[RMDB]
RNA sequence: GGGAACGACUCGAGUAGAGUCGAAAAUUGCGCUCUGUGCGGCUGGCAUCAUCCCCACGCGUCGUGGCACAACUUCGUCCCCCACAAACCAACGGCGCAGCAAAGCGUGAGAUGCGACGCAUCACAAUCCUUUUACCGGGUUCGCCCGGUAAAAGGAAAAAGAAACAACAACAACAAC
Reactivity to DMS in 0.01 (KOAc 150mM, MgCl2 10mM, bicine 150mM(pH8.5), 24C), signal-to-noise 1, nucleotides 027 to 126: u010u060g020c020g000c000u000c070u030g020u000g010c090g010g000c100u000g000g010c060a100u000c060a130u010c010c010c040c090a130c080g000c000g030u040c020g000u010g000g010c100a090c110a050a170c090u010u000c180g000u010c030c000c010c010c010a050c120a000a090a070c030c040a040a070c060g020g000c020g000c000a090g000c300a010a090a050g010c090g020u000g000a040g050a150u000g000c020g040a120c240g000c000a080u010c050a080c070a140a300
Structure probing data (DMS) for a 177-nucleotide construct. It was measured as part of the RMDB library OK2TST. The RNA was probed in 150 mM KOAc, 10 mM MgCl2 and 150 mM bicine (pH 8.5) at 24 C.